[RMDB]
RNA sequence: GGGAACGACUCGAGUAGAGUCGAAAAAAUCAGAAUCGGGGGGAAAGACAUCAUCGUGCAUAAAGGAGAUGCAGCUGAUGCAAGUCAAUACACAGUGAGAAGACUCUAUGCAUGCCUUGCUCAAGAAGAGAAUACACUCCUUCGGGAGUGUAUUCUCAAAAGAAACAACAACAACAAC
Reactivity to 2A3 in 0.01 (KOAc 150mM, MgCl2 10mM, bicine 150mM(pH8.5), 24C), signal-to-noise 2, nucleotides 027 to 126: a000a000u210c020a000g020a000a020u020c030g000g010g010g000g030g000a000a010a180g000a000c020a090u010c010a020u050c040g110u040g000c000a000u100a040a300a000g200g020a200g010a020u000g030c000a060g040c040u020g010a010u080g010c040a030a020g040u020c020a060a020u100a050c260a000c000a020g100u100g160a140g000a140a040g050a110c030u030c000u040a070u020g000c040a000u090g020c000c010u030u120g010c010u020c020a000a040g090a050a000
Reactivity to DMS in 0.01 (KOAc 150mM, MgCl2 10mM, bicine 150mM(pH8.5), 24C), signal-to-noise 2, nucleotides 027 to 126: a090a070u020c070a060g030a070a060u000c070g040g030g010g000g010g000a070a030a050g020a110c080a020u000c020a010u000c020g000u040g010c030a050u000a070a070a070g030g030a060g000a030u010g020c030a030g000c070u000g040a020u000g020c070a040a100g030u000c050a080a060u000a130c080a070c130a000g020u010g000a140g000a070a070g000a090c030u000c010u000a090u030g000c050a050u000g010c080c010u010u000g000c090u000c110a010a050g000a130a070